[RMDB]
RNA sequence: GGGAACGACUCGAGUAGAGUCGAAAAGGAACGUUGUUCGCAACGUUCCGUGCCGGAAACGGACAUGACGAUCGCGCGCAUGUCGCGAAACCGUAAACGCGAGCAUCAUGGUGUUCGCACCAUGAAAACCCUCAGAUUCGUUCGCGAAUCUGAGGGUAAAAGAAACAACAACAACAAC
Reactivity to 2A3 in 0.01 (KOAc 150mM, MgCl2 10mM, bicine 150mM(pH8.5), 24C), signal-to-noise 2, nucleotides 027 to 126: g000g000a000a000c000g020u010u010g010u050u070c150g000c090a000a000c000g010u000u000c000c000g000u040g030c010c010g070g040a170a140a020c020g030g010a010c000a010u030g070a150c020g040a080u030c010g010c010g000c000g000c040a020u040g000u070c040g050c020g160a100a030a010c040c020g100u140a060a130a090c030g010c010g010a020g010c040a020u000c000a010u010g010g000u010g010u030u040c150g020c040a000c000c000a000u010g000a030a010a010
Reactivity to DMS in 0.01 (KOAc 150mM, MgCl2 10mM, bicine 150mM(pH8.5), 24C), signal-to-noise 2, nucleotides 027 to 126: g010g000a030a010c020g030u000u000g000u000u020c120g020c030a010a010c000g030u000u000c000c000g010u020g030c040c020g030g000a050a160a080c040g020g020a050c040a010u000g010a090c030g000a120u000c040g010c030g040c020g000c020a080u020g010u000c000g020c090g000a060a050a100c300c020g000u000a020a090a060c010g010c020g000a040g040c300a110u000c000a000u000g000g030u010g000u010u010c140g000c020a020c000c000a000u000g000a040a040a080
This 177-nucleotide RNA was probed chemically with 2A3 and DMS. Source: RMDB library M2PK50, as collected in RNAgym. Conditions: 150 mM KOAc, 10 mM MgCl2 and 150 mM bicine (pH 8.5), 24 C. Reactivities are given for positions 27 through 126. For 2A3 the reverse transcriptase was SuperScript II with manganese. Values are in units of 0.01, from 0 to 300, in steps of 10.